Structure probing data (DMS) for a 177-nucleotide construct.
The RNA was probed in 150 mM KOAc, 10 mM MgCl2 and 150 mM bicine (pH 8.5) at 24 C.
The data come from the RNA Mapping Database (RMDB), library OK2TST.

RNA sequence: GGGAACGACUCGAGUAGAGUCGAAAACGGUGACGGCCCCUCUCCUUCAGCCUGACCGCCGCCAGCUCCCUCGGCGUGUCCGGGGUGGCCAGGCCUUGUUUAGAGUAGCUCCAGCGUUUGAAUCGCGAAUACCGAUCCUGUUCGCAGGAUCGGUAUUAAAAGAAACAACAACAACAAC
Reactivity to DMS in 0.01 (KOAc 150mM, MgCl2 10mM, bicine 150mM(pH8.5), 24C), signal-to-noise 2, nucleotides 027 to 126: c080g020g030u020g010a130c140g010g000c020c000c050c050u000c030u010c040c020u000u010c090a170g010c060c020u000g000a050c030c050g000c060c030g010c050c020a120g010c050u000c150c010c000u000c040g020g020c030g010u010g010u000c010c020g010g000g010g010u010g000g000c020c040a040g010g010c030c090u020u000g000u000u000u000a080g000a070g020u000a090g030c020u010c020c010a110g010c010g020u000u000u000g000a160a110u000c030g010c050g000